[RMDB]
RNA sequence: GGGAACGACUCGAGUAGAGUCGAAAAACAUUAAGUUUCGACUUAAUGUAAACCCGAUGAAGCGGCACAUACGGAGCUACAUACAUCUAAGAGUGCAAAUAAAAAGUUGAUCCUUCGGGAUCAACAAUCAAUAACCACCUUUCGAGGUGGUUAUUGAAAAAGAAACAACAACAACAAC
Reactivity to DMS in 0.01 (KOAc 150mM, MgCl2 10mM, bicine 150mM(pH8.5), 24C), signal-to-noise 3, nucleotides 027 to 126: a040c010a020u010u000a000a000g000u000u000u010c180g030a060c000u000u000a000a000u000g010u000a030a090a120c000c010c010g000a090u010g030a190a080g000c120g000g000c020a040c030a080u020a070c140g010g000a060g020c060u020a030c100a070u020a080c060a050u000c030u010a100a100g000a110g000u000g000c080a060a060a100u010a030a070a080a090a110g000u000u000g010a010u000c000c000u000u000c210g060g010g010a000u000c000a010a010c000a040a060
Reactivity to 2A3 in 0.01 (KOAc 150mM, MgCl2 10mM, bicine 150mM(pH8.5), 24C), signal-to-noise 3, nucleotides 027 to 126: a020c000a000u000u000a000a000g000u010u080u190c200g060a030c000u010u000a010a010u000g000u010a080a030a040c020c000c000g020a100u130g040a070a040g090c080g080g000c060a010c000a030u240a060c110g050g010a030g050c040u050a030c020a140u190a020c030a060u050c020u110a100a050g070a020g120u050g040c050a010a090a030u180a050a080a030a010a010g000u000u000g000a000u000c000c010u030u040c270g100g000g000a010u000c000a000a000c000a000a000
Structure probing data (DMS and 2A3) for a 177-nucleotide construct. The DMS profile rests on 2,257 reads. The data come from the RNA Mapping Database (RMDB), library M2PK50.